RNA sequence: GGGAACGACUCGAGUAGAGUCGAAAAGAUAUGGAAAGAACUACAGCGGACCGGAGCGUUGAAAUGAAAACUAGCUCGGAAACGAGCUAGUUUUCAUGGAGCUCCUAGUACGCUGCUUUCCUAAGUCCAUAUUUCUCCUCUUCGGAGGAGAAAUAUGAAAAGAAACAACAACAACAAC
Reactivity to DMS in 0.01 (KOAc 150mM, MgCl2 10mM, bicine 150mM(pH8.5), 24C), signal-to-noise 2, nucleotides 027 to 126: g020a110u010a300u000g000g000a030a020a050g000a140a060c120u020a300c000a000g000c000g000g000a120c300c220g010g000a020g030c010g010u000u040g000a210a110a000u000g000a000a020a000a010c000u000a000g000c010u000c000g000g000a070a080a240c000g010a010g040c000u000a000g010u000u000u000u000c000a000u000g030g000a100g000c000u000c000c000u010a020g020u010a190c000g020c020u010g000c030u010u000u020c000c000u000a080a100g000u000c030